[RMDB]
Annotation:
Chemical mapping of a 207-nucleotide RNA with DMS and 2A3. For DMS, 4,928 sequencing reads were counted. The reactions ran in a buffer of 150 mM KOAc, 10 mM MgCl2 and 150 mM bicine (pH 8.5), at 24 C. It was measured as part of the RMDB library M2RFOK.
RNA sequence: GGGAACGACUCGAGUAGAGUCGAAAAUCAGAAUCAGGCCGGAUUGUUUAGCGCUCCGUAAACACGGUCGUACAUCCAGCCGGUAGCCUGGUUCCUUGCAUUGAGUGAUGUACGGAGUUUAUAGAGCAAAAGAAAGACCUGUUCGCAGGUCUUUCAACGUAUACACCACGUUCGCGUGGUGUAUACGAAAAGAAACAACAACAACAAC
Reactivity to DMS in 0.01 (KOAc 150mM, MgCl2 10mM, bicine 150mM(pH8.5), 24C), signal-to-noise 2, nucleotides 027 to 156: u000c020a040g010a060a020u000c030a020g010g000c020c050g000g000a080u000u010g010u000u000u000a180g030c110g020c020u000c000c020g040u000a010a040a040c030a160c120g010g050u000c010g040u000a020c010a040u010c000c030a170g020c040c070g000g020u000a070g020c050c000u000g030g030u000u010c000c030u030u000g020c110a150u000u010g000a150g030u000g000a040u000g030u000a040c030g020g010a130g000u000u000u000a040u000a070g000a060g020c020a110a070a110a140g000a030a010a010g000a020c010c000u000g010u000u000c280g030c020a030g030g020u000c000u000u000u000c010a040a100
Reactivity to 2A3 in 0.01 (KOAc 150mM, MgCl2 10mM, bicine 150mM(pH8.5), 24C), signal-to-noise 5, nucleotides 027 to 156: u100c010a010g040a010a000u010c000a010g020g000c020c030g070g060a140u060u050g050u070u100u120a110g060c070g000c040u000c010c010g000u010a010a020a010c040a020c130g130g100u110c000g010u010a000c000a010u000c020c030a010g060c020c010g030g000u040a030g030c000c000u000g010g020u020u000c030c020u060u120g040c020a130u080u160g040a050g060u140g010a010u010g000u010a000c020g030g020a110g030u030u020u000a030u020a020g010a000g010c020a040a020a040a060g010a000a000a000g000a000c000c000u000g010u020u050c210g030c080a000g000g000u000c000u000u000u000c000a000a000